[RMDB]
RNA sequence: GGGAACGACUCGAGUAGAGUCGAAAAAGUGUAGCAAGUAGGUCGGCGGGGCGUUUCGGAGAUGAAUGGGCGUCCUCGCAGAGCUGCAGAGGUUUUCCUGUCCGCCUUGCAGGGUCUACUCUGUGAGGCGGCGUUCGUCGUUCGCGAUGGGUGCCGCAAAAGAAACAACAACAACAAC
Reactivity to DMS in 0.01 (KOAc 150mM, MgCl2 10mM, bicine 150mM(pH8.5), 24C), signal-to-noise 9, nucleotides 027 to 126: a080g010u020g010u010a050g010c060a110a110g010u010a030g010g010u000c030g010g010c010g010g000g000g010c010g000u000u010u040c030g010g010a160g020a150u040g010a110a120u050g010g000g010c010g000u030c010c000u010c010g010c010a040g010a060g010c010u000g000c010a060g010a140g010g000u010u010u010u010c010c010u000g000u030c010c010g000c000c000u000u000g000c000a000g000g000g000u020c130u030a090c000u000c000u000g000u000g000a000g000
Reactivity to 2A3 in 0.01 (KOAc 150mM, MgCl2 10mM, bicine 150mM(pH8.5), 24C), signal-to-noise 9, nucleotides 027 to 126: a000g100u070g000u020a010g020c030a050a040g030u020a010g040g140u010c020g020g010c010g010g000g010g000c010g000u020u070u150c040g070g030a150g030a120u190g100a120a100u080g010g020g000c010g020u150c000c000u000c010g000c010a000g000a010g020c020u020g000c020a020g020a060g070g010u030u020u040u050c010c000u020g040u030c000c000g000c000c000u000u010g000c000a010g040g000g020u060c040u140a250c010u100c010u010g010u000g010a020g020

Record summary
An RNA of 177 nucleotides, treated with DMS and 2A3 and read out base by base. Source: RMDB library OK1LIB, as collected in RNAgym. For DMS, 172,731 sequencing reads were counted. Reactivities are given for positions 27 through 126. High 2A3 reactivity points to a flexible backbone, as in loops and unpaired stretches. 2A3 adducts were read by reverse transcription with SuperScript II with manganese. The reactions ran in a buffer of 150 mM KOAc, 10 mM MgCl2 and 150 mM bicine (pH 8.5), at 24 C.